[RMDB]
RNA sequence: GGGAACGACUCGAGUAGAGUCGAAAAUCAUGUUUUAGUGUCGCUGCACUUACAACUGGUUUGACUUUUCAAACUGUGCGGCCUGGCAAUUUUAACCAAGACUUCUAUGAUUUCGUGGUAUCUAAAGUGACUCAUCUCUUCGGAGAUGAGAAAAGAAACAACAACAACAAC
Reactivity to 2A3 in 0.01 (KOAc 150mM, MgCl2 10mM, bicine 150mM(pH8.5), 24C), signal-to-noise 9, nucleotides 027 to 129: u060c030a060u090g120u030u060u050u100a090g020u020g010u020c010g000c010u040g010c020a010c010u060u210a090c070a180a070c090u090g030g000u010u010u030g040a040c060u100u130u130u090c010a010a010a000c020u020g010u010g010c000g010g010c000c010u080g020g000c000a020a020u050u060u070u150a060a020c020c020a050a030g050a040c020u050u020c030u110a100u230g030a050u050u050u060c050g020u070g040g010u060a070u030c030u090a060a060a080g060u060g080a040
Reactivity to DMS in 0.01 (KOAc 150mM, MgCl2 10mM, bicine 150mM(pH8.5), 24C), signal-to-noise 6, nucleotides 027 to 129: u020c070a090u040g000u020u010u010u010a040g030u000g030u020c080g050c060u050g030c030a000c020u050u070a060c250a110a090c200u000g020g020u000u000u000g040a100c240u050u030u050u020c000a000a030a030c000u030g060u000g020c000g030g040c060c130u040g000g000c000a060a020u010u000u000u000a050a060c020c040a100a060g010a050c030u000u000c070u030a070u060g020a050u040u030u010c060g000u020g000g030u000a120u000c080u040a020a030a040g020u000g020a160